Structure probing data (DMS and 2A3) for a 177-nucleotide construct.
For DMS, 8,103 sequencing reads were counted.
It was measured as part of the RMDB library RFMREP.
In probing experiments dimethyl sulfate is read out at A N1 and C N3, which are open when not base-paired.
The reactions ran in a buffer of 150 mM KOAc, 10 mM MgCl2 and 150 mM bicine (pH 8.5), at 24 C.

[RMDB]
RNA sequence: GGGAACGACUCGAGUAGAGUCGAAAACGUGUCUCUCCCUAAGAUCGGGAGUAGCAGGGCAUAGGUUGGAAGAGAAACCUUUUGUGAAAAUGAUUUCUGCUUACUGCUUUCUUUUUCCCUCAUUUUGCUAUUUGCUAAAGUUCGCUUUAGCAAAUAGAAAAGAAACAACAACAACAAC
Reactivity to DMS in 0.01 (KOAc 150mM, MgCl2 10mM, bicine 150mM(pH8.5), 24C), signal-to-noise 5, nucleotides 027 to 126: c120g020u000g010u010c020u000c020u000c000c000c000u010a150a150g010a120u010c260g020g000g000a020g010u010a020g030c050a080g010g010g010c110a060u000a030g010g020u000u010g010g010a090a050g000a120g000a030a020a030c030c010u000u000u000u010g010u010g000a090a030a040a050u010g000a050u000u000u000c010u000g010c010u000u000a090c060u000g000c020u000u000u010c070u000u000u010u000u000c000c000c000u020c150a130u010u000u000u010g010
Reactivity to 2A3 in 0.01 (KOAc 150mM, MgCl2 10mM, bicine 150mM(pH8.5), 24C), signal-to-noise 4, nucleotides 027 to 126: c050g050u040g080u050c030u000c000u000c050c010c010u070a170a110g070a230u210c070g000g000g030a010g030u090a020g030c030a030g010g040g000c030a040u040a050g030g010u030u090g050g040a090a030g030a010g040a080a030a050c010c000u040u060u080u110g130u030g060a120a080a020a050u100g040a070u030u060u070c020u050g080c010u040u040a070c050u030g050c000u070u100u120c050u100u110u030u020u020c010c010c010u030c060a110u060u100u010u030g020